[RMDB]
RNA sequence: GGGAACGACUCGAGUAGAGUCGAAAAGAAACGCAAGGCCGCUGACCGACGGGAUAAUGUGGGGCUUACCACAGGGGACGCGGCGUUAUCACUUGCCUUUUAAGCCGACCGUCUGGGCUGCAUACAAACCACCCAACUAUCUUCGGAUAGUUGGGAAGUUCUAGCAAGAGUUCGCUCUUGCUAGAACAAAAGAAACAACAACAACAAC
Reactivity to 2A3 in 0.01 (KOAc 150mM, MgCl2 10mM, bicine 150mM(pH8.5), 24C), signal-to-noise 3, nucleotides 027 to 156: g010a030a010a010c060g000c000a000a000g120g000c000c000g010c040u060g090a060c000c030g020a020c030g090g010g020a130u090a220a060u110g010u020g020g010g030g150c090u140u170a030c040c010a000c000a010g000g000g050g050a000c050g000c010g000g040c000g000u020u050a030u030c000a010c120u020u020g000c000c000u030u120u040u080a040a000g000c000c030g020a080c000c020g040u030c020u090g070g000g030c010u030g000c030a030u080a110c090a010a070a050c060c030a050c010c010c000a000a010c000u000a010u000c000u020u020c050g030g000a000u000a010g000u000u000g000g000g000a000a000
Reactivity to DMS in 0.01 (KOAc 150mM, MgCl2 10mM, bicine 150mM(pH8.5), 24C), signal-to-noise 1, nucleotides 027 to 156: g020a030a100a070c070g010c040a050a060g010g000c000c000g030c010u000g010a300c060c020g020a120c040g010g020g040a130u030a100a110u010g020u010g020g020g000g010c220u000u010a070c030c000a040c000a080g040g000g030g000a260c180g000c000g030g000c070g020u000u010a060u010c120a210c160u010u010g000c020c030u030u000u000u000a000a120g020c030c020g010a080c010c030g020u000c030u030g020g010g010c010u000g030c050a140u010a160c110a050a100a120c040c060a180c010c010c000a000a030c000u000a010u000c010u000u020c280g110g010a000u010a000g010u000u010g010g000g020a000a010
Structure probing data (2A3 and DMS) for a 207-nucleotide construct. DMS adducts were read by reverse transcription with MarathonRT. It was measured as part of the RMDB library M2RFPK. Conditions: 150 mM KOAc, 10 mM MgCl2 and 150 mM bicine (pH 8.5), 24 C.